Source information
This 170-nucleotide RNA was probed chemically with 2A3 and DMS. The RNA was probed in 150 mM KOAc, 10 mM MgCl2 and 150 mM bicine (pH 8.5) at 24 C. For 2A3, 21,676 sequencing reads were counted. Values cover nucleotides 27 to 129.
[RMDB]
RNA sequence: GGGAACGACUCGAGUAGAGUCGAAAAAAUGGCUCGUGGGCCAUUUUUAAUGACCACCAUCUUAAUAGACCUGGUGUCUAUUGUGGCUCUGAUUUUAUUGACAUUGUCAGGCGGUUAGCAGUAUCACGAACCGAACGGUUCGCCGUUCGGAAAAGAAACAACAACAACAAC
Reactivity to 2A3 in 0.01 (KOAc 150mM, MgCl2 10mM, bicine 150mM(pH8.5), 24C), signal-to-noise 9, nucleotides 027 to 129: a000a000u020g000g000c010u030c060g080u130g030g020g000c000c000a010u000u000u000u000u010a040a070u100g060a020c010c000a030c010c010a090u070c040u110u200a070a050u030a060g060a080c030c070u110g220g000u180g010u060c010u000a060u000u030g020u020g010g000c000u020c010u060g090a140u050u060u060u140a120u080u140g030a040c050a080u060u060g030u040c020a010g010g010c020g030g020u000u050a000g000c020a010g040u050a040u140c020a010c030g030a040a040
Reactivity to DMS in 0.01 (KOAc 150mM, MgCl2 10mM, bicine 150mM(pH8.5), 24C), signal-to-noise 4, nucleotides 027 to 129: a000a000u000g020g020c030u030c070g060u000g010g000g010c000c000a000u000u000u000u000u000a090a150u000g000a130c030c030a100c060c070a000u020c070u080u000a070a040u010a080g020a060c050c030u040g000g000u050g000u050c010u030a030u010u020g040u000g010g040c100u020c030u010g030a080u000u000u000u000a080u010u000g020a040c030a080u010u040g010u030c070a060g040g030c100g000g000u000u000a030g010c030a050g000u000a030u070c000a060c010g000a100a120